Source information:
Chemical mapping of a 177-nucleotide RNA with DMS and 2A3. 2A3 adducts were read by reverse transcription with SuperScript II with manganese. The data come from the RNA Mapping Database (RMDB), library OK1LIB.
[RMDB]
RNA sequence: GGGAACGACUCGAGUAGAGUCGAAAACACUAGCUUUAGAAGCUGUAACUGGCUUUAGGAGCUGUAACCCUUACAGCAAUGUAAGGGUGAUACCUAGCUGAGUCAGUGAUACCUAGCAGAGCUAGAAGAUAAUGUAGAGUUUCGACUUUACAUUAUCAAAAGAAACAACAACAACAAC
Reactivity to DMS in 0.01 (KOAc 150mM, MgCl2 10mM, bicine 150mM(pH8.5), 24C), signal-to-noise 9, nucleotides 027 to 126: c070a280c010u000a000g000c000u000u010u010a110g020a120a090g000c080u020g010u010a120a030c010u000g000g000c000u010u000u020a050g010g010a140g020c130u020g010u010a120a030c000c000c010u010u010a000c000a010g000c300a300a300u000g000u000a000a000g000g000g000u000g000a210u130a130c060c020u000a020g000c050u010g000a000g000u000c000a000g000u000g000a030u020a010c080c020u000a050g020c090a100g000a010g000c010u000a000g000a120a120
Reactivity to 2A3 in 0.01 (KOAc 150mM, MgCl2 10mM, bicine 150mM(pH8.5), 24C), signal-to-noise 9, nucleotides 027 to 126: c030a010c010u010a000g010c000u080u080u060a130g050a260a020g030c020u010g010u010a060a030c000u000g010g010c000u060u060u110a120g080g070a030g030c030u020g030u030a040a050c000c000c010u010u000a010c010a030g060c080a170a300u050g000u000a000a000g000g000g000u000g000a000u000a010c010c020u020a010g020c020u000g000a000g000u000c000a000g000u000g010a010u010a030c010c020u010a010g020c010a010g000a000g000c000u010a000g030a040a020